[RMDB]
Conditions: 150 mM KOAc, 10 mM MgCl2 and 150 mM bicine (pH 8.5), 24 C. Chemical mapping of a 177-nucleotide RNA with 2A3 and DMS. For 2A3 the reverse transcriptase was SuperScript II with manganese. It was measured as part of the RMDB library M2PK50. For DMS, 1,260 sequencing reads were counted. As a SHAPE reagent, 2A3 marks flexible, mostly unpaired nucleotides at the ribose 2'-OH.
RNA sequence: GGGAACGACUCGAGUAGAGUCGAAAAACUGCGGUAUUCGUACCGCAGUACAUAAAAAGGAUAAAAUACCAGUAGCCCGAAACGCAAGCGAGGACUACUGGCGCAAGAACCACUUCGGUGGUUCUAAAGUGAUUCCAGUAUUCGUACUGGAAUCACUAAAAGAAACAACAACAACAAC
Reactivity to 2A3 in 0.01 (KOAc 150mM, MgCl2 10mM, bicine 150mM(pH8.5), 24C), signal-to-noise 2, nucleotides 027 to 126: a000c000u000g000c000g000g010u010a020u010u120c150g040u050a020c020c010g000c000a000g000u000a000c000a000u300a030a090a000a020a040g170g040a080u190a230a230a090a020u160a120c030c020a000g010u020a000g000c000c000c000g050a100a090a020c050g000c120a070a060g040c010g010a070g020g000a030c000u000a000c000u000g000g000c020g010c000a030a020g000a010a010c010c010a000c000u030u090c180g140g010u000g000g000u010u020c000u000a000a000
Reactivity to DMS in 0.01 (KOAc 150mM, MgCl2 10mM, bicine 150mM(pH8.5), 24C), signal-to-noise 2, nucleotides 027 to 126: a030c000u000g020c000g040g000u000a010u000u020c200g020u000a010c000c000g000c000a000g010u000a010c090a080u000a020a050a080a060a060g000g010a160u020a020a070a050a130u010a150c010c010a020g010u000a000g000c000c000c000g000a070a070a040c030g000c300a080a140g000c000g000a300g010g000a020c000u000a010c000u000g000g000c070g000c240a100a010g000a010a000c000c010a010c010u000u010c200g010g020u010g010g000u000u000c000u000a010a060